[RMDB]
Chemical mapping of a 207-nucleotide RNA with 2A3. The reactions ran in a buffer of 150 mM KOAc, 10 mM MgCl2 and 150 mM bicine (pH 8.5), at 24 C. For 2A3 the reverse transcriptase was SuperScript II with manganese. Source: RMDB library OK3TST, as collected in RNAgym. The 2A3 profile rests on 1,132 reads.
RNA sequence: GGGAACGACUCGAGUAGAGUCGAAAACGCUCGGUCACCGAGAACGGAACCGCCGCCACACGUGUCGAGGUCGGCGACUCCGGAGCCGGAAUAGCGCCCGAGCUGGUCGACGAGGUGUUCCGGGCCGGUUUCACGACCAAGGUGGCCCAGCACGGUGCUACUGAUAGCACUUCGGUGCUAUCAGUAGAAAAGAAACAACAACAACAAC
Reactivity to 2A3 in 0.01 (KOAc 150mM, MgCl2 10mM, bicine 150mM(pH8.5), 24C), signal-to-noise 2, nucleotides 027 to 156: c050g000c010u000c020g090g010u020c010a010c030c030g030a030g070a160a050c050g050g020a090a030c030c030g060c020c040g010c040c030a110c030a060c080g070u110g110u240c110g050a090g010g030u020c000g020g030c060g040a020c020u000c000c000g050g010a080g220c070c010g020g020a060a130u070a070g070c040g000c020c030c010g000a020g050c130u170g070g040u130c040g010a080c030g020a130g000g110u040g030u060u000c010c000g000g000g030c020c030g030g030u050u060u030c040a040c040g000a030c000c030a050a030g000g000u010g000g000c000c010c010a020g000c020a000c030g060g090u080g000